[RMDB]
RNA sequence: GGGAACGACUCGAGUAGAGUCGAAAAACCACAGUAUGUGGCUCUAGGUAUUUGCACACAUGGAACUCUGCACCUUCCAUCUGUAAAGAUGACCGGUAGAAAUGGCAGAGCUAAGGGACAAAAGUCUGAGGCUGGUGGAGACUUAAUCACCUUAAUACGGCAUUAUAUCAUUCGUGAUAUAAUGCCGAAAAGAAACAACAACAACAAC
Reactivity to 2A3 in 0.01 (KOAc 150mM, MgCl2 10mM, bicine 150mM(pH8.5), 24C), signal-to-noise 4, nucleotides 027 to 156: a010c040c000a040c020a040g140u170a130u160g030u040g010g000c000u040c050u080a080g020g080u110a170u040u060u130g060c050a050c010a000c020a100u100g070g010a020a050c020u010c020u040g030c040a020c010c020u070u090c030c000a020u010c010u050g120u180a090a050a120g010a000u040g020a050c040c090g080g000u050a020g140a070a160a080u100g070g000c000a000g000a000g020c010u030a030a040g010g010g000a000c030a060a130a000a040g030u000c010u040g020a020g050g020c030u020g030g000u030g010g030a030g020a010c000u040u070a030a020u120c020a120c070c000u030u060a100a020u130a170
Reactivity to DMS in 0.01 (KOAc 150mM, MgCl2 10mM, bicine 150mM(pH8.5), 24C), signal-to-noise 1, nucleotides 027 to 156: a080c010c010a030c050a220g020u020a090u020g040u000g030g000c010u000c050u000a060g010g010u000a080u000u000u010g060c030a060c010a080c050a070u010g010g000a060a010c010u000c020u000g020c000a100c040c020u000u000c050c000a040u000c030u000g030u010a070a130a040g010a070u000g000a100c060c040g060g000u010a090g020a040a070a110u000g010g010c000a020g000a030g040c040u010a030a080g020g020g000a080c000a040a060a020a080g000u000c030u010g020a110g020g000c030u000g010g000u020g050g010a100g000a040c030u000u010a100a090u000c060a050c000c050u000u000a060a070u000a170